[RMDB]
RNA sequence: GGGAACGACUCGAGUAGAGUCGAAAAGGGUGCCCUAUCCGAGCACUGCUGUUUCGGUAGAAAGGCUAAGCACGUCGCAAUGACGUAAGGUGGGACUUUUCCCUCGAGUUCGAGCGGUCGGACUCAGCAACAGUCAGUAGUUCGCUACUGACUGUUGAAAAGAAACAACAACAACAAC
Reactivity to 2A3 in 0.01 (KOAc 150mM, MgCl2 10mM, bicine 150mM(pH8.5), 24C), signal-to-noise 4, nucleotides 027 to 126: g040g030g000u150g190c000c000c000u020a060u050c000c010g030a010g010c050a040c160u150g020c070u040g140u300u210u110c050g020g050u050a060g030a060a030a010g050g000c030u040a050a060g060c050a030c030g020u010c000g020c160a250a300u300g010a010c010g010u020a020a040g020g000u030g010g000g010a020c000u050u020u020u040c000c000c010u040c090g000a010g000u020u010c000g000a040g040c140g070g070u010c000g000g000a010c000u000c020a010g050
Reactivity to DMS in 0.01 (KOAc 150mM, MgCl2 10mM, bicine 150mM(pH8.5), 24C), signal-to-noise 4, nucleotides 027 to 126: g000g010g010u000g010c000c010c010u000a070u020c030c010g000a090g010c030a060c200u020g000c090u000g010u000u000u000c020g010g000u010a060g030a060a070a160g020g010c010u000a080a140g000c110a130c020g010u000c010g020c210a120a090u010g010a010c000g020u010a060a070g000g000u000g000g000g000a030c050u000u000u000u000c000c010c010u000c130g000a020g010u000u000c000g010a040g010c270g000g000u000c010g000g000a030c010u000c010a170g000

An RNA of 177 nucleotides, treated with 2A3 and DMS and read out base by base. The data come from the RNA Mapping Database (RMDB), library VIROID. For 2A3, 4,216 sequencing reads were counted. As a SHAPE reagent, 2A3 marks flexible, mostly unpaired nucleotides at the ribose 2'-OH. 2A3 adducts were read by reverse transcription with SuperScript II with manganese. Conditions: 150 mM KOAc, 10 mM MgCl2 and 150 mM bicine (pH 8.5), 24 C.